[RMDB]
RNA sequence: GGGAACGACUCGAGUAGAGUCGAAAAAAAGACAGCAGGGACUGCCAUGAUGUUUUCAGAUUCUUCACGGAACACUGCACCAUCAAUCAUAGAAUGCGUGAUGUUAGGGUUGAUCACACUCAUUAAGCCAGUCAUAUGGUUUCGACCAUAUGACUGGAAAAGAAACAACAACAACAAC
Reactivity to DMS in 0.01 (KOAc 150mM, MgCl2 10mM, bicine 150mM(pH8.5), 24C), signal-to-noise 3, nucleotides 027 to 126: a050a050a040g010a110c040a040g040c060a080g000g000g020a070c040u010g020c050c080a040u000g000a090u010g020u040u000u020u000c050a070g000a230u030u000c000u010u030c040a130c140g000g010a080a020c060a080c020u010g000c170a050c030c020a050u010c050a040a040u030c070a070u070a050g000a110a060u020g020c070g020u010g000a020u010g000u030u030a090g000g000g020u000u000g010a060u010c010a080c080a060c040u020c110a060u030u000a070a080g020
Reactivity to 2A3 in 0.01 (KOAc 150mM, MgCl2 10mM, bicine 150mM(pH8.5), 24C), signal-to-noise 3, nucleotides 027 to 126: a000a000a000g160a010c050a000g040c030a040g030g040g050a050c010u050g010c020c010a070u120g030a020u020g080u060u050u020u090c050a100g030a180u070u000c010u070u070c030a020c070g040g000a060a030c070a020c070u060g010c030a010c030c000a040u090c040a000a120u110c030a060u070a150g060a280a040u100g040c000g050u040g040a110u040g100u090u090a070g070g020g000u010u080g020a020u020c020a000c000a000c010u040c010a050u050u130a020a040g070
About this RNA:
Conditions: 150 mM KOAc, 10 mM MgCl2 and 150 mM bicine (pH 8.5), 24 C. The record gives the reactivity of an RNA of 177 nucleotides to DMS and 2A3. The DMS profile rests on 4,474 reads. Reactivities are given for positions 27 through 126. The 2A3 profile rests on 2,128 reads.